Chemical mapping of a 177-nucleotide RNA with 2A3 and DMS. Values cover nucleotides 27 to 126. In probing experiments dimethyl sulfate is read out at A N1 and C N3, which are open when not base-paired. High 2A3 reactivity points to a flexible backbone, as in loops and unpaired stretches. 2A3 adducts were read by reverse transcription with SuperScript II with manganese. The RNA was probed in 150 mM KOAc, 10 mM MgCl2 and 150 mM bicine (pH 8.5) at 24 C.
[RMDB]
RNA sequence: GGGAACGACUCGAGUAGAGUCGAAAAGAUAUGGAGUUGCAGAGCUUACAGACACUAUUCGGAAACGAACGAAUGUCGUAAGCGACGAAGCAACUCCUAAGUCAAAAGUGUAGGUUCGCCUACACAAGUUCCAUUGCUUCUUCGGAAGCAAUGGAACAAAAGAAACAACAACAACAAC
Reactivity to 2A3 in 0.01 (KOAc 150mM, MgCl2 10mM, bicine 150mM(pH8.5), 24C), signal-to-noise 1, nucleotides 027 to 126: g030a000u030a030u170g010g060a000g000u010u020g000c010a060g000a010g020c000u000u030a000c070a240g020a010c020a000c050u080a050u020u020c000g000g080a080a230a110c040g020a020a010c050g090a300a300u030g010u010c000g010u000a010a000g000c000g030a010c010g000a030a050g000c030a000a000c000u000c000c000u000a020a020g050u000c060a000a000a070a220g000u000g000u000a000g000g030u050u040c300g060c070c010u000a000c010a000c000a020a000
Reactivity to DMS in 0.01 (KOAc 150mM, MgCl2 10mM, bicine 150mM(pH8.5), 24C), signal-to-noise 1, nucleotides 027 to 126: g020a030u000a300u000g000g010a000g040u000u050g020c000a050g000a230g010c000u000u010a000c000a300g060a010c000a020c060u010a210u000u000c000g020g000a100a070a180c000g020a000a060c080g000a050a020u000g010u010c000g000u000a000a000g000c000g000a130c210g000a170a040g000c000a000a000c000u000c000c000u030a000a120g000u000c020a120a180a130a120g000u000g000u000a020g000g000u000u000c250g140c010c000u000a000c000a000c000a060a070